[RMDB]
RNA sequence: GGGAACGACUCGAGUAGAGUCGAAAACUCGAAUCUUUCGAGAUUCGAGACUCUCGAAGUGUCAAUAAGAUCGAAAAGAUCGCCGAGCAUAAAAAAGACACAAUGCUGCUUGAUUCGUCAAGCAGAAUAAGGUUAUUAGCUUCGGCUAAUAACCUUAAAAAGAAACAACAACAACAAC
Reactivity to DMS in 0.01 (KOAc 150mM, MgCl2 10mM, bicine 150mM(pH8.5), 24C), signal-to-noise 3, nucleotides 027 to 126: c000u000c000g010a030a010u000c000u000u000u010c160g000a030g000a020u000u000c000g000a010g000a100c170u000c000u000c020g020a110a130g020u000g000u010c000a110a130u020a070a120g010a010u000c000g000a190a070a090a180g000a000u000c010g030c250c030g010a040g000c300a060u000a000a040a040a120a040a030g000a010c010a000c010a120a110u000g000c020u000g000c000u000u000g000a020u000u000c150g010u000c000a000a000g000c010a000g000a050a070
Reactivity to 2A3 in 0.01 (KOAc 150mM, MgCl2 10mM, bicine 150mM(pH8.5), 24C), signal-to-noise 2, nucleotides 027 to 126: c000u000c000g000a000a000u010c010u040u110u160c270g100a030g000a020u020u010c000g000a000g010a020c020u030c000u000c070g050a270a090g000u010g000u030c030a040a040u120a260a090g000a000u020c010g030a060a160a140a190g000a010u000c010g010c000c010g000a030g010c120a180u210a020a110a020a030a000a000g000a010c020a020c030a030a110u160g040c000u000g000c000u000u010g010a000u030u050c140g010u020c130a000a000g000c010a000g000a010a050
Chemical mapping of a 177-nucleotide RNA with DMS and 2A3. Reactivities are given for positions 27 through 126. For DMS, 1,741 sequencing reads were counted. The reactions ran in a buffer of 150 mM KOAc, 10 mM MgCl2 and 150 mM bicine (pH 8.5), at 24 C. DMS adducts were read by reverse transcription with MarathonRT.